[RMDB]
RNA sequence: GGGAACGACUCGAGUAGAGUCGAAAAGAGCCAGGUGCUGUGCAGAAGCUGCAGCCUCACGUAGAAGGAAGAGGCUCUGCAGUGGAGGCCAGUGCCCAUCCCCGGGUGGCAGAGGCCCCAGCAGAGACUGAUCGAUGCUGUUCGCAGCAUCGAUCAGAAAAGAAACAACAACAACAAC
Reactivity to 2A3 in 0.01 (KOAc 150mM, MgCl2 10mM, bicine 150mM(pH8.5), 24C), signal-to-noise 2, nucleotides 027 to 126: g030a000g080c060c040a060g000g000u020g010c000u030g120u240g020c010a020g010a080a020g000c000u000g000c000a120g300c030c000u010c000a070c060g080u200a080g080a300a110g180g020a130a100g020a010g000g010c010u000c010u030g000c000a000g020u020g020g010a020g000g020c000c000a000g000u000g000c010c010c010a070u000c000c000c000c000g090g010g010u130g000g060c070a040g060a090g260g090c040c000c010c000a010g020c030a000g030a000g010a170
Reactivity to DMS in 0.01 (KOAc 150mM, MgCl2 10mM, bicine 150mM(pH8.5), 24C), signal-to-noise 2, nucleotides 027 to 126: g000a070g030c110c090a100g000g030u000g010c000u010g040u000g010c010a060g030a300a200g020c010u010g010c000a040g000c030c000u000c030a050c110g000u010a100g020a180a170g000g030a160a090g000a040g000g010c040u000c060u000g010c000a030g000u000g010g010a300g000g000c010c000a020g020u000g010c010c000c050a080u010c020c000c030c130g020g000g020u000g020g020c010a060g000a190g000g020c030c000c030c050a050g030c110a100g020a180g000a120